An RNA of 207 nucleotides, treated with 2A3 and DMS and read out base by base. The RNA was probed in 150 mM KOAc, 10 mM MgCl2 and 150 mM bicine (pH 8.5) at 24 C. The DMS profile rests on 13,888 reads. It was measured as part of the RMDB library OK3TST. 2A3 adducts were read by reverse transcription with SuperScript II with manganese.
RNA sequence: GGGAACGACUCGAGUAGAGUCGAAAAUUCUUCUCGCUCCUUGUAUUUCCAGUGGGCCGGGGAUGUUGCGUAAAUCUCGCCGAGGCUUGAGCCGCUAACGUACCUGGCGCACCAGGAGUUAGGAUCGUGGUAAUCAUCGUUGGAUAAUUCCGCGUUGCAUAUCAAACACAUUCGUGUGUUUGAUAUGAAAAGAAACAACAACAACAAC
Reactivity to 2A3 in 0.01 (KOAc 150mM, MgCl2 10mM, bicine 150mM(pH8.5), 24C), signal-to-noise 6, nucleotides 027 to 156: u030u000c000u060u000c010u010c020g000c000u000c000c010u040u050g080u230a100u030u120u020c020c000a010g010u010g000g200g000c000c010g010g000g020g030a040u090g010u010u020g030c010g030u070a060a110a200u010c010u010c020g000c040c070g100a140g170g000c020u050u080g020a030g030c020c000g000c080u130a010a000c000g080u090a010c000c000u010g000g010c010g000c010a000c010c000a090g000g000a000g010u010u020a010g010g000a010u030c020g010u050g060g130u160a160a050u080c030a020u020c030g070u160u300g040g000a070u090a210a120u300u030c010c000g000c010g020u020u040g000
Reactivity to DMS in 0.01 (KOAc 150mM, MgCl2 10mM, bicine 150mM(pH8.5), 24C), signal-to-noise 3, nucleotides 027 to 156: u000u010c030u000u000c020u000c030g010c070u000c000c010u000u000g020u000a040u010u000u000c020c030a120g040u000g010g000g070c020c010g020g000g020g010a100u000g020u000u000g000c010g000u010a050a080a090u000c030u000c080g020c020c040g010a170g080g020c020u010u000g020a050g030c300c040g000c020u010a030a050c030g020u000a090c010c000u010g010g030c030g000c030a000c010c010a070g020g010a080g010u000u000a050g020g010a050u000c020g010u010g020g020u000a060a090u010c080a070u000c040g020u000u020g020g010a120u000a100a200u000u000c000c010g010c050g020u000u000g000